[RMDB]
RNA sequence: GGGAACGACUCGAGUAGAGUCGAAAAGAUAUGGACUCCCCACCUAGUGAACUACUGCCUGUAUUCGGAAACGAAUAUUGGCAGCACUAGAGGUCCUAAGUCAAAGUCACUUGUUCGCAAGUGACAAUCAAAAGUGACACUUCGGUGUCACUUUUGAAAAAGAAACAACAACAACAAC
Reactivity to DMS in 0.01 (KOAc 150mM, MgCl2 10mM, bicine 150mM(pH8.5), 24C), signal-to-noise 1, nucleotides 027 to 126: g030a080u010a220u000g000g020a040c000u010c130c010c080c020a300c190c000u010a010g030u000g000a040a130c050u010a300c000u000g000c000c020u000g000u010a000u000u000c000g000g020a090a040a180c030g000a000a000u000a000u000u000g000g020c000a020g020c000a010c000u010a000g000a220g010g000u000c000c000u030a070a050g000u000c070a110a080a090g000u000c000a000c000u000u000g000u000u040c190g000c000a000a010g010u000g000a000c010a060a060
This 177-nucleotide RNA was probed chemically with DMS.
Reactivities are given for positions 27 through 126.
It was measured as part of the RMDB library TTRDEL.
For DMS the reverse transcriptase was MarathonRT.